[RMDB]
RNA sequence: GGGAACGACUCGAGUAGAGUCGAAAAAAUUGAUGCAAGGUGUGGACCGACCUUAAACAGUUCUGGUGGUGCUCUGAAUGGAGUGCUCUACUGAGAUUAUAAAAUAGAAGGUAAGCUAUUAUCUCUUAAAACGCAAUAGAGUUCGCUCUAUUGCGAACUAAUGCACAACGUUCGCGUUGUGCAUUAGAAAAGAAACAACAACAACAAC
Reactivity to 2A3 in 0.01 (KOAc 150mM, MgCl2 10mM, bicine 150mM(pH8.5), 24C), signal-to-noise 2, nucleotides 027 to 156: a000a000u190u160g020a070u120g020c080a040a030g020g000u020g000u060g100g020a010c000c050g060a040c010c020u070u070a080a090a030c020a070g010u070u040c020u120g020g000u020g000g020u020g000c000u010c010u060g230a120a090u250g010g000a010g020u060g000c040u030c010u060a050c030u030g010a000g010a100u070u110a070u200a120a080a080a020u050a030g050a060a000g090g030u130a050a040g030c000u040a060u150u050a070u060c020u000c000u010u070a160a080a030a050c020g000c000a000a000u000a000g010a000g010u020u130c260g040c060u000c000u000a010u000u000g000c000g000a000a000
Reactivity to DMS in 0.01 (KOAc 150mM, MgCl2 10mM, bicine 150mM(pH8.5), 24C), signal-to-noise 1, nucleotides 027 to 156: a100a040u040u000g000a070u000g010c060a080a030g000g050u000g040u010g020g010a100c030c030g000a050c010c030u000u000a050a100a130c030a000g010u000u000c040u000g000g050u030g060g020u000g020c050u000c050u030g000a120a020u000g020g010a090g040u000g010c030u020c010u000a050c080u010g060a090g010a080u010u000a090u010a070a110a070a140u000a100g010a060a070g000g040u000a070a070g060c030u010a030u000u000a070u000c010u000c010u000u000a020a040a150a110c030g010c010a000a030u000a030g000a030g020u000u030c300g040c000u000c000u000a060u000u010g010c000g010a010a030